[RMDB]
RNA sequence: GGGAACGACUCGAGUAGAGUCGAAAAGUUUCGGAGGGUAAGGCGGACAUUGAAAUCGAGGACUGCGUGUCCGGUGAUUGCAAAGAAUUAUUAGAUAAAGAUCCUAACCCUGGUGCAUUUAAGAUUGGUAUGCAAGUAUGUUCGCAUACUUGCAUACAAAAGAAACAACAACAACAAC
Reactivity to 2A3 in 0.01 (KOAc 150mM, MgCl2 10mM, bicine 150mM(pH8.5), 24C), signal-to-noise 3, nucleotides 027 to 126: g000u000u050u080c020g030g050a030g010g070g010u050a040a040g040g050c020g000g030a040c040a050u040u030g050a040a050a000u030c010g010a040g020g010a010c010u030g040c170g210u250g030u050c000c000g000g040u100g010a000u000u030g020c020a050a050a050g030a130a080u100u070a060u100u120a080g060a150u090a100a090a000g030a130u010c020c000u010a020a030c010c000c000u010g020g070u100g030c040a070u000u020u250a060a040g030a080u000u140g080
Reactivity to DMS in 0.01 (KOAc 150mM, MgCl2 10mM, bicine 150mM(pH8.5), 24C), signal-to-noise 6, nucleotides 027 to 126: g010u000u010u000c030g020g010a060g000g000g010u010a080a070g010g000c130g010g010a090c120a130u000u000g010a040a030a030u000c010g010a300g000g000a020c020u010g030c230g030u010g020u000c010c010g000g040u010g000a010u000u000g010c040a030a040a080g010a120a100u000u010a080u010u010a100g000a180u000a080a070a120g000a100u010c010c010u010a060a080c030c010c000u000g010g030u000g020c100a070u010u000u010a060a120g000a140u010u000g000